Chemical mapping of a 207-nucleotide RNA with 2A3.
The reactions ran in a buffer of 150 mM KOAc, 10 mM MgCl2 and 150 mM bicine (pH 8.5), at 24 C.
For 2A3, 993 sequencing reads were counted.
[RMDB]
RNA sequence: GGGAACGACUCGAGUAGAGUCGAAAAAGCGCUGCCACGACCUAUAUGUCGAGUCCCGCAAGCACAUCAAGGACCUCCAGGCGGAUCAUGAGGACUUCCUCCAAGGUGUCUAUGCGGAGCAUGACGCGAAGAUGAUGGCGUGCGGGAGGCACUACCAACUACGGAUGAUGUUCGCAUCAUCCGUAGUAAAAGAAACAACAACAACAAC
Reactivity to 2A3 in 0.01 (KOAc 150mM, MgCl2 10mM, bicine 150mM(pH8.5), 24C), signal-to-noise 2, nucleotides 027 to 156: a010g140c150g030c090u040g010c020c020a050c010g010a000c000c070u180a070u070a070u300g020u070c050g030a060g200u020c000c020c000g000c000a000a080g010c020a020c000a300u010c020a050a000g110g010a030c010c010u080c040c020a070g090g050c020g000g060a030u060c010a070u190g040a030g090g070a080c000u120u040c010c030u000c020c020a010a010g060g000u040g070u050c010u050a070u120g020c020g020g030a010g150c080a060u170g030a070c030g000c020g030a050a030g080a050u100g000a000u000g040g010c000g010u020g030c000g000g010g000a030g000g000c040a020c020u030a070c010c000a030